[RMDB]
RNA sequence: GGGAACGACUCGAGUAGAGUCGAAAAGCUGCACCGGGACCAACUGAUCGGCCAGCGCGUCCUCGGCAUUGCGGCCCCACCGAUCCGUCGUGGAGAUGAUCACCCGGUUGGUGAAGCCCGUCUUGCCGAGGGUAGUCGAUUUCGAUCGACUACCCUCAAAAGAAACAACAACAACAAC
Reactivity to 2A3 in 0.01 (KOAc 150mM, MgCl2 10mM, bicine 150mM(pH8.5), 24C), signal-to-noise 1, nucleotides 027 to 126: g000c000u040g000c030a010c000c010g000g030g000a060c020c060a100a100c110u090g030a080u060c000g030g000c020c010a020g000c040g050c050g060u000c000c000u010c010g000g020c030a060u030u070g000c050g010g020c000c010c000c010a010c010c000g020a040u110c010c030g010u100c040g020u080g070g040a190g040a240u210g030a080u190c000a020c000c040c020g040g000u030u000g020g040u040g010a030a020g000c000c000c000g020u000c000u010u050g030c020c010
Reactivity to DMS in 0.01 (KOAc 150mM, MgCl2 10mM, bicine 150mM(pH8.5), 24C), signal-to-noise 1, nucleotides 027 to 126: g050c040u000g010c090a070c020c020g020g020g010a170c090c060a140a080c200u000g000a150u000c050g020g010c300c030a030g000c030g000c140g010u000c040c010u000c010g010g040c040a060u000u010g010c020g000g000c060c030c020c010a020c050c000g000a030u010c030c020g050u010c080g010u000g030g000a110g000a130u000g010a130u000c030a020c040c080c040g000g000u000u020g010g000u000g010a050a140g020c200c010c020g040u010c070u000u000g000c040c030